Background
This 177-nucleotide RNA was probed chemically with 2A3 and DMS. DMS adducts were read by reverse transcription with MarathonRT. Source: RMDB library OK2TST, as collected in RNAgym.
RNA sequence: GGGAACGACUCGAGUAGAGUCGAAAAGGCAACUCACGCUAUGAACGCUUCAGCUUAUCAAUAACGGAAGUUAUAAUUUCAUUGUCAUCAAACUUGUACAACAUAGUAUCUAAAACAGGAAGUAGCGUAUUCGAGAAGCUUUCGAGCUUCUCGAAUAAAAAGAAACAACAACAACAAC
Reactivity to 2A3 in 0.01 (KOAc 150mM, MgCl2 10mM, bicine 150mM(pH8.5), 24C), signal-to-noise 1, nucleotides 027 to 126: g040g000c020a010a000c020u000c010a030c000g050c050u050a120u050g100a080a000c040g020c020u000u000c000a040g020c020u090u080a150u180c110a050a240u090a050a080c040g030g030a090a030g000u050u060a070u020a120a210u000u000u120c100a070u000u130g090u060c040a060u020c050a190a010a130c040u090u030g010u080a040c050a080a000c000a150u150a070g050u040a070u040c090u130a070a110a040a000c000a040g030g060a160a000g000u010a000g060c030g000
Reactivity to DMS in 0.01 (KOAc 150mM, MgCl2 10mM, bicine 150mM(pH8.5), 24C), signal-to-noise 1, nucleotides 027 to 126: g000g030c040a050a030c090u010c130a050c030g030c000u000a090u010g000a110a160c140g010c040u000u000c000a030g020c020u000u020a120u000c080a100a060u000a020a060c030g030g040a070a070g010u000u000a060u000a000a100u010u000u000c080a110u010u010g000u010c010a030u000c070a020a030a040c060u000u010g010u040a070c150a050a140c070a030u010a050g000u000a060u030c040u000a060a030a100a080c070a070g000g010a100a090g010u010a030g010c000g010